[RMDB]
RNA sequence: GGGAACGACUCGAGUAGAGUCGAAAAAUUCAAUUAGAUAAUGGAGUAUUUAAGUGAAGCAUUAAUGACUGAUCAAUUAAUGGUUUCACAUCUAAAUCAAUAUCAGUUAUCAUUGGUUCACCAUCACCAUUACCCCUGCAUUCGUGCAGGGGUAAUGAAAAGAAACAACAACAACAAC
Reactivity to DMS in 0.01 (KOAc 150mM, MgCl2 10mM, bicine 150mM(pH8.5), 24C), signal-to-noise 2, nucleotides 027 to 126: a030u050u030c010a020a020u070u020a160g010a030u000a000a020u010g000g070a140g020u000a000u010u000u000a040a050g060u020g000a010a010g010c000a020u010u010a020a000u000g000a130c270u010g010a060u050c140a060a060u000u000a010a020u020g020g000u070u000u000c060a050c010a040u050c130u000a060a010a050u040c120a010a030u010a020u010c010a210g040u010u010a000u000c000a000u000u000g000g020u000u000c040a060c000c040a130u010c120a120c070
Reactivity to 2A3 in 0.01 (KOAc 150mM, MgCl2 10mM, bicine 150mM(pH8.5), 24C), signal-to-noise 7, nucleotides 027 to 126: a000u100u080c010a000a030u060u040a070g000a000u010a020a020u060g060g060a110g080u180a070u010u060u040a120a000g000u030g020a000a000g000c000a000u010u010a000a020u030g070a060c160u150g100a190u120c100a070a030u030u040a020a010u050g110g040u020u070u070c000a000c000a030u060c040u060a010a040a060u050c040a040a020u030a080u150c020a030g040u010u000a000u010c010a010u000u030g010g030u050u030c060a160c230c020a040u140c060a020c070